[RMDB]
RNA sequence: GGGAACGACUCGAGUAGAGUCGAAAAUCUUCUCAGAAUCCAGCGGGGGCGUGGAGAGAGGGCCGCGGUGCUCUGGAGCACAGGCUCUGGCUUCAAAACACCAUCGAUCGUCCCUUCUUCUUUACCUUCUUCUGGCUCUUCCGAUGGAGACGCGACCGACAACUGAAAUCUUCGGAUUUCAGUUGUCAAAAGAAACAACAACAACAAC
Reactivity to 2A3 in 0.01 (KOAc 150mM, MgCl2 10mM, bicine 150mM(pH8.5), 24C), signal-to-noise 1, nucleotides 027 to 156: u000c000u000u010c000u000c000a010g000a010a040u300c010c010a030g000c020g000g000g000g000g000c120g020u020g020g000a010g000a000g020a010g010g000g030c060c000g050c010g000g030u030g030c010u010c040u030g010g000a000g000c030a030c080a300g220g020c110u130c040u180g010g000c000u020u030c030a050a050a090a060c060a030c000c020a030u070c050g070a180u070c000g010u000c020c000c000u040u040c030u090u000c030u010u010u030a010c010c000u050u060c000u050u030c000u000g000g000c000u000c000u020u050c000c020g010a060u300g010g000a000g000a000c030g050c100g110a040c020c030

Chemical mapping of a 207-nucleotide RNA with 2A3.